[RMDB]
This 177-nucleotide RNA was probed chemically with 2A3 and DMS. The DMS profile rests on 27,396 reads. The RNA was probed in 150 mM KOAc, 10 mM MgCl2 and 150 mM bicine (pH 8.5) at 24 C.
RNA sequence: GGGAACGACUCGAGUAGAGUCGAAAAGAUAUGGAAGUUUCGGGAGAAGGACAUCGGAAACGAUGUUCUUCGAAGAACGAGAACUUCCUAAGUCAAAGGCAUUGUAGUGUUCGCACUACAAUGCCAAGCAUAAAGUUAAGUUCGCUUAACUUUAUGCAAAAGAAACAACAACAACAAC
Reactivity to 2A3 in 0.01 (KOAc 150mM, MgCl2 10mM, bicine 150mM(pH8.5), 24C), signal-to-noise 6, nucleotides 027 to 126: g010a010u020a010u050g000g000a010a000g010u020u030u040c020g000g010g010a080g000a010a000g010g000a000c000a000u000c000g000g010a010a010a000c000g000a000u010g000u000u010c000u010u010c000g010a010a010g010a000a000c000g010a020g050a050a030c000u000u000c000c000u000a000a000g000u010c050a090a090a200g010g000c000a010u000u010g000u000a010g000u000g050u090u100c300g050c100a000c000u000a000c000a000a000u000g000c000c000a000a000
Reactivity to DMS in 0.01 (KOAc 150mM, MgCl2 10mM, bicine 150mM(pH8.5), 24C), signal-to-noise 8, nucleotides 027 to 126: g000a010u000a040u010g000g000a010a010g010u000u000u000c010g000g010g010a030g010a020a010g000g000a000c000a000u000c000g020g000a010a010a030c000g020a000u000g000u000u000c000u000u000c000g000a060a120g010a120a260c020g000a040g010a030a020c010u000u000c000c000u000a000a080g000u000c010a090a120a150g000g000c000a000u000u000g000u000a000g020u000g010u000u020c240g020c000a010c000u000a000c000a000a000u000g010c000c000a000a020
Description
Reactivities are given for positions 27 through 126. For 2A3 the reverse transcriptase was SuperScript II with manganese.